[RMDB]
RNA sequence: GGGAACGACUCGAGUAGAGUCGAAAAUCACCCCGUCGAGUGUGACGAGGAGUGUUCUGAAGUAGAGGCUUCAGAUUUAGAAGAAGGUGAAUCAGAGUGCAUUUCUGAGACUUCAACUGAACAAGUUAUACAGGAAACUUCGGUUUCCUGAAAAGAAACAACAACAACAAC
Reactivity to DMS in 0.01 (KOAc 150mM, MgCl2 10mM, bicine 150mM(pH8.5), 24C), signal-to-noise 8, nucleotides 027 to 129: u040c000a100c000c000c000c000g020u020c000g000a150g000u090g050u000g000a050c040g020a120g020g020a130g020u020g030u030u020c020u000g020a020a020g010u030a060g030a050g020g000c020u000u000c000a030g010a120u010u010u010a030g010a040a230g000a030a050g000g030u060g040a080a130u020c020a000g000a040g000u060g060c260a160u010u020u000c010u030g000a020g010a110c010u000u000c000a050a260c000u050g000a040a030c170a000a050g010u010u000a100u050a140
Reactivity to 2A3 in 0.01 (KOAc 150mM, MgCl2 10mM, bicine 150mM(pH8.5), 24C), signal-to-noise 9, nucleotides 027 to 129: u090c000a050c000c030c000c000g000u010c010g010a130g170u200g040u220g090a010c010g010a120g010g020a120g010u040g020u070u000c020u010g020a020a010g010u090a100g020a070g150g070c000u010u000c040a020g030a080u040u050u090a060g000a070a010g020a030a000g060g030u210g130a060a070u030c010a020g020a010g040u140g150c120a140u080u130u000c000u010g010a030g000a030c010u000u000c030a070a050c030u020g010a020a010c020a080a010g070u120u050a080u020a090

This 170-nucleotide RNA was probed chemically with DMS and 2A3.
Conditions: 150 mM KOAc, 10 mM MgCl2 and 150 mM bicine (pH 8.5), 24 C.